[RMDB]
An RNA of 177 nucleotides, treated with 2A3 and DMS and read out base by base. DMS adducts were read by reverse transcription with MarathonRT. For 2A3 the reverse transcriptase was SuperScript II with manganese. Values cover nucleotides 27 to 126. The DMS profile rests on 1,743 reads.
RNA sequence: GGGAACGACUCGAGUAGAGUCGAAAAUCGACGACGCCUACAAGAUGCGCCAGGACCCGGCGGUCACCGUCGACAUGGUGCUGUCCGUGCCCGCCGAGCACCCGCUGGCCGCCCUCGACGGCGCCAACAGCAUUAGUGGGUUCGCCCACUAAUGCUGAAAAGAAACAACAACAACAAC
Reactivity to 2A3 in 0.01 (KOAc 150mM, MgCl2 10mM, bicine 150mM(pH8.5), 24C), signal-to-noise 2, nucleotides 027 to 126: u080c030g050a040c040g010a010c030g030c010c000u040a030c070a130a010g030a090u090g020c030g000c000c030a030g060g020a060c040c010c000g000g000c010g000g000u020c020a030c070c060g120u170c060g020a040c040a070u210g080g100u160g140c080u020g050u030c000c020g010u010g030c000c010c000g020c030c000g010a020g020c030a110c020c060c020g060c070u010g010g000c030c000g020c010c010c000u040c000g070a080c040g010g020c000g000c020c000a060a030
Reactivity to DMS in 0.01 (KOAc 150mM, MgCl2 10mM, bicine 150mM(pH8.5), 24C), signal-to-noise 2, nucleotides 027 to 126: u020c070g010a110c040g010a010c050g000c020c030u000a180c300a120a050g000a040u000g020c070g010c010c010a100g020g000a150c060c040c030g020g020c000g000g000u000c030a050c110c060g020u000c070g000a070c100a070u000g000g010u010g040c050u000g010u000c000c050g000u000g010c060c000c020g010c080c030g010a060g000c060a110c060c060c090g010c060u020g000g020c020c060g030c030c120c000u000c120g040a110c180g000g020c040g020c010c030a070a170
The RNA was probed in 150 mM KOAc, 10 mM MgCl2 and 150 mM bicine (pH 8.5) at 24 C. As a SHAPE reagent, 2A3 marks flexible, mostly unpaired nucleotides at the ribose 2'-OH.